[RMDB]
RNA sequence: GGGAACGACUCGAGUAGAGUCGAAAAAGAAUCAAAUGGGCAAUAUUUGUCCUGGGAGACCUGUGCCGCACCCAGGUCCCCGUGUUAACGUGUGCCUGCGGUUGUGGUUGGCACCCUCGGGUGGUAGCACUUUACGCAAGUUCGCUUGCGUAAAGUGAAAAGAAACAACAACAACAAC
Reactivity to DMS in 0.01 (KOAc 150mM, MgCl2 10mM, bicine 150mM(pH8.5), 24C), signal-to-noise 1, nucleotides 027 to 126: a030g000a140a110u030c070a050a130a110u020g020g020g010c020a060a050u010a140u000u000u010g000u000c000c000u020g020g030g000a070g000a130c030c020u000g020u010g030c020c030g030c040a020c040c000c010a010g000g020u020c190c010c070c000g030u000g000u010u000a090a060c070g010u010g010u000g010c000c010u010g010c160g020g000u040u000g060u030g000g050u000u010g000g000c040a100c030c010c030u010c200g000g000g000u000g000g010u000a060g000